[RMDB]
RNA sequence: GGGAACGACUCGAGUAGAGUCGAAAAGCAGGUAGCCCACGUAGACCUCGAGCGCGUUGCCGGACGUGGGAAAGUCGAAGCCCCACACCUCUUCGAGGAUGCGGCUGCGGGUCAGCACCCGUCGCGGACGGUGAGUCAUGUUCGCAUGACUCACCGUAAAAGAAACAACAACAACAAC
Reactivity to 2A3 in 0.01 (KOAc 150mM, MgCl2 10mM, bicine 150mM(pH8.5), 24C), signal-to-noise 3, nucleotides 027 to 126: g060c080a010g120g160u250a070g060c000c010c040a000c060g010u020a020g020a100c010c000u030c020g030a020g000c220g060c040g070u020u040g080c000c000g030g040a050c050g000u150g010g070g000a010a010a060g070u050c030g010a030a010g030c000c000c000c000a000c000a040c020c000u030c030u300u190c140g040a030g020g020a070u110g070c010g030g010c010u030g030c010g030g000g050u050c060a010g030c030a020c000c000c000g030u070c030g000c010g040g020
Reactivity to DMS in 0.01 (KOAc 150mM, MgCl2 10mM, bicine 150mM(pH8.5), 24C), signal-to-noise 2, nucleotides 027 to 126: g010c110a080g010g050u000a110g020c000c000c000a150c080g020u000a230g000a010c010c000u000c010g040a030g020c080g000c150g000u040u000g020c020c000g000g000a000c150g000u000g010g060g000a010a050a060g000u000c050g000a090a080g000c120c000c020c000a180c130a240c020c000u000c030u010u000c140g000a000g020g000a300u080g000c300g000g090c000u060g020c010g000g050g000u010c050a180g000c210a060c000c000c000g000u020c060g000c060g020g000